[RMDB]
RNA sequence: GGGAACGACUCGAGUAGAGUCGAAAAUUGUGCCUGCUGACAUCGGCAAGAUGAUGGCUGACAUUAUCAAGUCUGGCCUUGACAUUCAGGAAAUCACCGAACUCGCCGCGCGCCUUGAGAGACUGGAGAAAUUACUGGAGCAGCAGAAUGGCUCGUAGUACCACUGUAAGUUCGCUUACAGUGGUACAAAAGAAACAACAACAACAAC
Reactivity to DMS in 0.01 (KOAc 150mM, MgCl2 10mM, bicine 150mM(pH8.5), 24C), signal-to-noise 2, nucleotides 027 to 156: u000u000g000u010g030c050c010u000g040c010u010g010a100c050a060u000c040g040g000c060a110a150g000a070u000g030a080u000g020g020c080u000g020a130c140a080u010u020a120u000c080a050a160g010u000c030u010g040g030c130c020u000u000g010a070c060a120u010u010c060a040g000g000a070a130a120u000c050a080c010c020g020a060a100c040u000c050g000c050c020g000c030g000c040g000c000c020u020u010g010a100g020a130g000a080c060u000g000g010a120g050a050a050a070u000u000a060c060u000g010g000a080g010c030a060g000c030a030g000a040a110u010g010g020c020u030c010g030u000a150
Reactivity to 2A3 in 0.01 (KOAc 150mM, MgCl2 10mM, bicine 150mM(pH8.5), 24C), signal-to-noise 4, nucleotides 027 to 156: u060u070g020u040g070c000c010u030g000c030u060g040a040c020a070u070c040g050g050c140a050a040g020a030u070g000a020u050g000g000c010u040g000a020c020a090u120u210a120u280c110a170a060g030u000c050u070g040g000c040c000u030u070g070a040c030a130u060u080c060a060g000g070a000a070a060u070c050a040c050c040g010a050a060c020u010c060g030c030c000g050c010g000c020g020c030c030u120u110g050a060g010a010g000a070c030u040g020g000a060g060a040a100a040u160u080a030c030u030g020g010a010g000c020a000g000c000a000g040a070a050u040g020g000c000u000c010g000u000a070